[RMDB]
RNA sequence: GGGAACGACUCGAGUAGAGUCGAAAACGCUGGGUCGUGUUGUCUGUCCAGCUUUUGACGUCGUGGCAGCUCCGUACUGAAGCGCGCACGGUACCGACGAUAAGCUGGACAGACACCACGACCUGUGCUGAAGCGCGCACGGCAACCGAAAGGUGCGGUAAUUGAAGUCGUUCGCGACUUCAAUUACAAAAGAAACAACAACAACAAC
Reactivity to 2A3 in 0.01 (KOAc 150mM, MgCl2 10mM, bicine 150mM(pH8.5), 24C), signal-to-noise 2, nucleotides 027 to 156: c030g000c000u020g010g000g020u000c010g000u000g020u010u000g010u020c000u040g010u000c010c010a020g010c140u080u000u010u050g110a090c060g010u080c010g050u150g110g060c090a110g020c130u050c080c020g090u110a120c090u190g100a140a040g070c060g000c050g000c060a010c060g090g000u090a080c030c060g060a050c010g040a110u050a210a000g000c040u000g000g000a000c000a000g000a010c010a000c000c000a000c010g000a000c000c010u000g000u010g000c020u070g030a130a040g000c010g000c010g000c020a000c000g010g020c010a010a040c050c010g040a170a000a010g100g000u050g010c030g040